[RMDB]
RNA sequence: GGGAACGACUCGAGUAGAGUCGAAAAAGCGACUGCUAAACUAGCUUGGCGACUACGCUUGGGUGCUAAAAUUAAAUACGCUAUGAUGCCGCAUUUAUUAAAAGAGCAUACUAACCCAUUAGAAUGCCUUGUUUCAGGUAUUCGUACCUGAAACAAGAAAAGAAACAACAACAACAAC
Reactivity to DMS in 0.01 (KOAc 150mM, MgCl2 10mM, bicine 150mM(pH8.5), 24C), signal-to-noise 5, nucleotides 027 to 126: a030g000c000g010a100c240u040g000c080u010a040a100a100c120u020a090g010c080u000u000g000g010c000g010a050c050u020a080c050g000c020u000u010g000g010g000u010g000c030u010a040a090a060a070u020u040a020a030a050u020a050c060g000c030u010a090u010g000a100u010g000c120c040g010c030a010u000u020u010a040u010u040a090a050a070a070g000a090g010c010a010u000a090c040u000a050a140c010c030c000a080u020u010a060g010a090a060u010g010c080
Reactivity to 2A3 in 0.01 (KOAc 150mM, MgCl2 10mM, bicine 150mM(pH8.5), 24C), signal-to-noise 9, nucleotides 027 to 126: a000g050c030g110a110c080u100g020c030u100a080a080a110c060u050a050g050c020u030u040g060g020c020g040a050c030u180a060c050g040c040u040u080g020g010g010u030g000c030u070a120a050a040a050u120u100a030a040a030u120a030c020g000c030u050a060u280g070a090u120g070c040c000g000c040a030u030u090u050a120u030u180a050a090a040a020g070a010g000c010a010u050a100c030u030a030a060c020c000c000a010u050u050a050g080a100a040u070g030c000

Source: RMDB libraries RFM100 and RFMREP, as collected in RNAgym. An RNA of 177 nucleotides, treated with DMS and 2A3 and read out base by base.